[RMDB]
RNA sequence: GGGAACGACUCGAGUAGAGUCGAAAAUAAAACCAACAUGUGUAGUAUGUCUCUGUAUGUAACUGAUUGUUGUGAGCAAUUCCUUGCCACUCACCAAAGACAGAACUUUCCAUCUGUAGACAGUACAUUUUGUAGUAGAAAACAAUAGACAUAAGAAUAUGCAUAUUACGUUCGCGUAAUAUGCAUAAAAAGAAACAACAACAACAAC
Reactivity to DMS in 0.01 (KOAc 150mM, MgCl2 10mM, bicine 150mM(pH8.5), 24C), signal-to-noise 5, nucleotides 027 to 156: u010a050a090a130a230c050c030a300a080c060a050u010g030u000g020u010a110g020u020a080u000g010u010c010u000c050u010g030u010a040u000g010u000a060a140c030u000g000a110u000u010g000u000u000g010u020g010a130g000c030a100a200u000u000c050c070u010u000g020c040c060a200c030u000c020a060c020c060a050a060a130g010a170c010a090g010a080a120c080u000u010u000c060c020a110u000c030u000g010u000a060g000a060c030a050g020u000a060c030a100u000u000u000u010g010u000a120g020u010a090g010a060a090a090a080c040a050a130u010a110g010a080c060a070u000a080a160g010a070a220
Reactivity to 2A3 in 0.01 (KOAc 150mM, MgCl2 10mM, bicine 150mM(pH8.5), 24C), signal-to-noise 5, nucleotides 027 to 156: u070a000a060a010a020c030c000a020a040c060a080u070g040u010g010u040a030g040u010a070u050g030u000c010u020c030u030g100u150a040u030g030u030a090a040c020u020g030a160u060u060g030u040u060g000u000g030a070g010c020a060a060u180u110c020c030u030u050g010c020c010a030c020u040c000a050c030c030a080a100a020g040a030c010a030g040a100a060c040u100u100u010c030c020a020u000c010u020g040u050a020g020a040c000a000g030u070a000c000a030u100u150u040u140g030u040a110g020u010a020g120a040a120a010a010c030a060a030u070a080g040a030c070a070u150a090a060g000a090a040
The data come from the RNA Mapping Database (RMDB), library OK3TST.
An RNA of 207 nucleotides, treated with DMS and 2A3 and read out base by base.
DMS adducts were read by reverse transcription with MarathonRT.
The reactions ran in a buffer of 150 mM KOAc, 10 mM MgCl2 and 150 mM bicine (pH 8.5), at 24 C.
The 2A3 profile rests on 3,336 reads.
The DMS profile rests on 10,070 reads.